[RMDB]
RNA sequence: GGGAACGACUCGAGUAGAGUCGAAAAGCGUACUACAAUCGACACAGUCGCGAAACUCUCGCUCCCCACCCACGCUCCCAAAUAGGAGCGUGGAGGCGAGAGGAGACUGUGAUUCGAUUGUAUCGCAAAGUCAUAUAGGGUUCGCCCUAUAUGACAAGAUGACUGGAGGGUUCGCCCUCCAGUCAUCAAAAGAAACAACAACAACAAC
Reactivity to 2A3 in 0.01 (KOAc 150mM, MgCl2 10mM, bicine 150mM(pH8.5), 24C), signal-to-noise 2, nucleotides 027 to 156: g000c010g050u120a070c050u000a000c050a000a000u000c000g010a000c000a000c000a000g020u010c010g030c090g220a160a160a120c020u020c000u010c010g020c000u050c070c040c000c010a000c020c010c000a000c000g010c000u050c020c020c040a070a240a070u300a090g020g000a000g000c000g000u000g000g000a000g000g010c000g000a000g000a000g000g000a010g000a000c000u000g030u000g020a100u010u030c000g000a000u000u000g000u000a010u170c020g000c010a060a040a020g000u000c000a000u020a000u000a000g000g030g040u070u020c250g170c000c000c000u000a000u030a000u020g000a000c000a000a030
The record gives the reactivity of an RNA of 207 nucleotides to 2A3. The reactions ran in a buffer of 150 mM KOAc, 10 mM MgCl2 and 150 mM bicine (pH 8.5), at 24 C. Reactivities are given for positions 27 through 156.